[RMDB]
RNA sequence: GGGAACGACUCGAGUAGAGUCGAAAACGAUAGCUGUUCGCAGCUAUCGAAAGGACUACCCGUCAGGGUUAUGGCCAUACGGACAGCCGGGUCCAAUGCCGAAAAGAGGGUUGUUCGCAACCCUCAACAAAUUGCAGAACUUCGGUUCUGCAAUUUGAAAAGAAACAACAACAACAAC
Reactivity to DMS in 0.01 (KOAc 150mM, MgCl2 10mM, bicine 150mM(pH8.5), 24C), signal-to-noise 2, nucleotides 027 to 126: c020g000a030u000a000g000c000u000g020u010u020c190g020c010a000g020c000u010a000u000c010g010a050a080a120g000g000a030c010u000a020c010c000c000g000u010c300a080g000g010g010u010u010a040u000g020g020c020c010a060u010a130c030g010g000a030c010a110g000c010c000g040g010g010u010c000c000a120a030u020g000c000c000g010a290a030a090a090g010a020g010g000g000u000u010g020u000u000c150g010c010a010a000c000c000c000u000c010a020a050
Reactivity to 2A3 in 0.01 (KOAc 150mM, MgCl2 10mM, bicine 150mM(pH8.5), 24C), signal-to-noise 2, nucleotides 027 to 126: c000g010a000u000a000g000c000u000g040u100u060c270g000c100a000g020c000u000a000u000c000g000a030a010a010g020g000a010c010u000a010c030c000c000g070u180c180a130g110g000g000u100u140a110u300g060g000c000c000a030u050a060c000g020g000a020c000a000g030c020c000g070g000g010u000c000c010a000a000u030g030c000c020g070a060a040a010a060g000a000g020g000g000u000u000g000u000u060c100g000c050a000a010c000c000c000u010c010a000a000
Chemical mapping of a 177-nucleotide RNA with DMS and 2A3. For DMS the reverse transcriptase was MarathonRT. 2A3 adducts were read by reverse transcription with SuperScript II with manganese. It was measured as part of the RMDB library M2PK50. The reactions ran in a buffer of 150 mM KOAc, 10 mM MgCl2 and 150 mM bicine (pH 8.5), at 24 C.